[RMDB]
The record gives the reactivity of an RNA of 177 nucleotides to 2A3 and DMS. High DMS reactivity at an A or C suggests that its Watson-Crick edge is free. DMS adducts were read by reverse transcription with MarathonRT. It was measured as part of the RMDB library OK2TST. The 2A3 profile rests on 22,280 reads.
RNA sequence: GGGAACGACUCGAGUAGAGUCGAAAAUUCAUGAUGAUAUUUAAAACUGUCUCUGCCCAAGGCCUAUGUUACUGUCUUUUUGCCUGCUUCUCCUGCCUGUCCUUCUCAUGUGGCUGUUUUACCCCACGACUAACUCUAAUUUCGAUUAGAGUUAGUCAAAAGAAACAACAACAACAAC
Reactivity to 2A3 in 0.01 (KOAc 150mM, MgCl2 10mM, bicine 150mM(pH8.5), 24C), signal-to-noise 9, nucleotides 027 to 126: u070u040c030a020u080g100a030u060g020a020u050a170u170u170u130a110a100a030a030c020u020g010u030c000u000c020u070g030c000c010c010a020a030g040g000c010c020u090a080u150g070u060u100a070c020u050g060u110c020u030u070u030u080u060g040c010c000u030g040c010u050u010c010u020c010c000u010g040c000c010u040g020u050c010c000u050u040c030u010c010a050u090g030u030g060g000c020u010g040u020u030u010u060a080c020c000c000c010a020c050
Reactivity to DMS in 0.01 (KOAc 150mM, MgCl2 10mM, bicine 150mM(pH8.5), 24C), signal-to-noise 9, nucleotides 027 to 126: u000u010c040a090u010g010a100u010g010a070u010a050u000u000u000a060a060a100a140c130u000g000u000c020u000c040u000g010c020c020c030a100a100g010g010c050c070u000a060u000g010u000u010a080c090u000g000u000c020u000u000u000u000u000g010c040c020u000g010c050u000u000c040u000c020c020u000g010c040c030u000g010u000c020c030u000u000c030u000c050a080u010g020u000g010g010c050u000g010u000u000u000u010a250c090c020c000c060a110c200